This 207-nucleotide RNA was probed chemically with 2A3 and DMS.
For DMS the reverse transcriptase was MarathonRT.
Reactivities are given for positions 27 through 156.
For DMS, 2,301 sequencing reads were counted.
Conditions: 150 mM KOAc, 10 mM MgCl2 and 150 mM bicine (pH 8.5), 24 C.
For 2A3, 780 sequencing reads were counted.
RNA sequence: GGGAACGACUCGAGUAGAGUCGAAAAACUCGGUACCUUACGAGAAAUCAAAGUCGGUUCUGGGGGGAGUAUGGUCGCAAGGCUGAAACUUAAAGGAAUUGACGGAAGGGCACCCUAGGAGUGGAGCCUGCGGCUAAUUUGACUCAACACGGGGAAACGUAUAAAGGAACUUCGGUUCCUUUAUACGAAAAGAAACAACAACAACAAC
Reactivity to 2A3 in 0.01 (KOAc 150mM, MgCl2 10mM, bicine 150mM(pH8.5), 24C), signal-to-noise 2, nucleotides 027 to 156: a000c000u000c010g040g030u090a100c030c040u040u080a030c030g000a010g070a140a080a020u120c030a000a100a070g070u090c060g010g000u090u050c050u100g000g000g000g010g050g000a010g050u070a030u150g030g000u050c020g010c030a050a110g030g020c000u020g020a090a030a000c030u060u030a130a040a110g090g000a100a120u130u050g040a090c050g030g110a100a060g050g080g000c010a010c000c000c030u030a050g150g070a010g050u020g010g010a020g000c000c000u000g010c010g000g000c000u000a000a000u010u040u090g010a010c010u020c020a050a130c020a040c080g000g010g030g020a000a110a000
Reactivity to DMS in 0.01 (KOAc 150mM, MgCl2 10mM, bicine 150mM(pH8.5), 24C), signal-to-noise 1, nucleotides 027 to 156: a090c010u000c000g000g010u000a080c050c060u000u010a120c050g000a060g000a120a070a080u020c050a120a050a130g000u000c070g010g010u010u000c020u000g020g020g020g030g030g000a100g000u010a050u010g030g030u000c030g000c070a050a070g010g080c030u000g010a170a120a050c030u000u000a070a110a090g000g000a040a110u000u000g000a070c030g020g010a070a160g010g000g000c020a040c040c000c000u000a140g010g000a120g020u000g010g000a110g030c010c000u020g020c030g020g010c020u000a040a070u000u000u000g010a040c020u000c020a050a070c100a110c050g000g000g060g040a220a150a130

The data come from the RNA Mapping Database (RMDB), library PDB130.